An RNA of 207 nucleotides, treated with 2A3 and DMS and read out base by base. Conditions: 150 mM KOAc, 10 mM MgCl2 and 150 mM bicine (pH 8.5), 24 C. 2A3 adducts were read by reverse transcription with SuperScript II with manganese. DMS adducts were read by reverse transcription with MarathonRT. Values cover nucleotides 27 to 156.
RNA sequence: GGGAACGACUCGAGUAGAGUCGAAAACGGCGUGGAGGAAAUACCGGAAAACCUGUUCAGCGGCAACCCGUUGGUGACCUCUUACGGCCAGACUUUCAGGGGCUGUAAAAACCUGCGCUCAGUGCCAGCCGGUCUUUUUGCCGCCAGCAUAAGUGCCACGAAGAAUCUAAUUCGUUAGAUUCUUCGUAAAAGAAACAACAACAACAAC
Reactivity to 2A3 in 0.01 (KOAc 150mM, MgCl2 10mM, bicine 150mM(pH8.5), 24C), signal-to-noise 3, nucleotides 027 to 156: c030g000g000c050g020u070g010g030a050g000g030a090a060a050u070a090c020c020g000g010a040a080a070a100c030c020u060g050u120u130c050a020g030c020g020g000c030a040a020c010c010c030g020u020u050g030g010u060g070a070c000c030u040c000u060u090a020c030g010g010c000c000a030g070a110c090u150u240u130c100a050g110g000g030g000c010u010g000u060a040a010a000a050a070c000c020u030g020c050g000c050u070c060a050g080u040g050c020c000a020g020c010c010g020g000u070c070u050u180u020u050u090g020c010c010g000c020c020a030g000c000a060u090a280a030g050u070g070c030c020
Reactivity to DMS in 0.01 (KOAc 150mM, MgCl2 10mM, bicine 150mM(pH8.5), 24C), signal-to-noise 2, nucleotides 027 to 156: c060g000g020c010g030u030g010g000a040g010g020a060a060a100u000a070c030c020g000g000a110a080a090a080c060c040u000g020u000u000c080a140g030c030g030g010c020a070a080c040c020c070g000u000u010g000g020u000g000a080c030c010u000c100u000u000a050c100g050g000c000c020a090g010a150c040u000u010u010c070a140g010g020g010g040c050u020g000u000a040a090a060a110a020c020c020u000g010c080g010c030u000c060a060g000u000g020c020c020a150g010c030c030g040g030u000c040u000u010u000u010u000g010c000c000g010c040c030a080g000c010a100u000a030a100g000u000g010c020c150